[RMDB]
RNA sequence: GGGAACGACUCGAGUAGAGUCGAAAACAGGGAUCUCGCAUCUGGAGAUUCAGAAGCUCAUGUACUUCGCCAACGAGGCCGAUCCCGAUCUUGCGCUAGAUUUCACGCCCGGCCGAUACGGGCCAUACCCCAUCAAAGACUUCGGUCUUUGAUGGGGAAAAGAAACAACAACAACAAC
Reactivity to DMS in 0.01 (KOAc 150mM, MgCl2 10mM, bicine 150mM(pH8.5), 24C), signal-to-noise 2, nucleotides 027 to 126: c150a140g000g000g010a050u000c000u020c170g000c020a110u000c070u020g020g030a050g050a030u040u020c030a070g000a100a070g020c110u000c110a100u050g000u000a110c010u000u020c010g020c130c010a060a150c140g000a050g000g040c080c040g060a070u020c000c000c010g000a050u050c020u000u000g000c050g040c040u000a020g050a150u000u040u000c100a090c130g000c050c040c020g000g010c050c120g000a240u020a040c090g040g000g000c000c090a000u040a170
Reactivity to 2A3 in 0.01 (KOAc 150mM, MgCl2 10mM, bicine 150mM(pH8.5), 24C), signal-to-noise 3, nucleotides 027 to 126: c020a010g050g000g010a020u020c030u030c070g050c070a200u090c100u100g150g000a060g000a050u120u110c020a010g080a060a000g030c000u010c150a090u160g000u090a090c020u070u020c040g000c020c040a120a110c080g010a070g030g040c000c020g050a020u040c000c000c000g020a080u040c070u030u100g010c020g030c060u010a070g000a170u020u110u140c080a030c030g030c000c080c000g000g000c000c000g020a070u070a280c010g020g000g000c000c000a040u180a030